[RMDB]
Description
Chemical mapping of a 177-nucleotide RNA with 2A3 and DMS. Conditions: 150 mM KOAc, 10 mM MgCl2 and 150 mM bicine (pH 8.5), 24 C. 2A3 adducts were read by reverse transcription with SuperScript II with manganese. Reactivities are given for positions 27 through 126.
RNA sequence: GGGAACGACUCGAGUAGAGUCGAAAAGCCUGGACGAUCUGCCGGGGCUGGACGCGCCCGCGCUGGUGCUGGGCGCGCGCGACGACCAGAUCGUGCCGUUCGCGCUGCAGCAGCAGCUGGCGCGCGAAUACUCGCGCUAUUUCGAUAGCGCGAGUAUAAAAGAAACAACAACAACAAC
Reactivity to 2A3 in 0.01 (KOAc 150mM, MgCl2 10mM, bicine 150mM(pH8.5), 24C), signal-to-noise 1, nucleotides 027 to 126: g030c000c000u020g010g040a070c020g060a210u070c080u140g000c050c000g070g000g130g000c020u110g090g050a060c000g000c000g000c000c000c020g040c040g010c100u190g100g250u200g060c080u170g020g010g000c000g000c000g000c020g010c020g050a020c010g000a020c030c010a030g030a200u040c020g030u080g110c030c010g020u020u050c000g010c000g000c090u290g070c000a000g000c020a020g030c000a060g020c000u020g000g050c000g000c000g000c000g000a010
Reactivity to DMS in 0.01 (KOAc 150mM, MgCl2 10mM, bicine 150mM(pH8.5), 24C), signal-to-noise 2, nucleotides 027 to 126: g010c010c000u000g010g000a050c030g000a070u010c030u000g000c110c000g000g010g020g030c040u020g020g020a140c010g030c010g010c000c000c150g010c100g020c120u010g000g000u010g020c000u000g030g010g010c020g000c000g040c110g000c030g000a060c010g010a050c120c090a090g010a110u000c030g000u000g010c060c000g000u000u000c000g000c010g020c000u000g000c010a020g000c010a130g000c140a080g020c020u000g000g020c060g010c010g000c000g020a080